[RMDB]
RNA sequence: GGGAACGACUCGAGUAGAGUCGAAAAACUGGCUCCUAUAAGGGGCCAGUGCAAACGCAACAGUUUUGUCGGGGGUUCCUGUAACAGGUCUGUUGCGUGUGCGUUUUUAUUUGACGAAUUCUGACCGAUAUUACCCACCAUUCGUGGUGGGUAAUAUAAAAGAAACAACAACAACAAC
Reactivity to 2A3 in 0.01 (KOAc 150mM, MgCl2 10mM, bicine 150mM(pH8.5), 24C), signal-to-noise 6, nucleotides 027 to 126: a000c000u000g000g010c000u000c000c000u150a120u100a300a190g000g000g000g010c000c000a000g000u010g000c010a020a020a000c000g000c000a000a000c000a000g000u000u040u060u020g020u040c010g010g000g030g060g130u270u300c000c000u010g020u050a020a020c000a010g020g010u000c000u000g010u000u010g000c020g000u000g010u020g000c020g020u000u000u040u040u110a300u060u090u190g050a040c050g040a060a080u090u000c010u050g040a070c020c090g020
Reactivity to DMS in 0.01 (KOAc 150mM, MgCl2 10mM, bicine 150mM(pH8.5), 24C), signal-to-noise 3, nucleotides 027 to 126: a070c000u010g000g000c000u000c000c010u010a170u040a090a140g010g000g000g010c000c000a010g000u010g010c040a020a040a010c010g000c000a010a010c010a010g010u000u010u020u010g010u000c030g000g000g000g020g000u040u030c010c010u000g000u020a090a020c010a030g000g000u000c010u000g010u000u010g000c000g010u000g010u000g000c010g000u020u000u020u010u010a060u030u020u000g010a060c110g000a120a100u010u010c030u010g010a120c150c100g010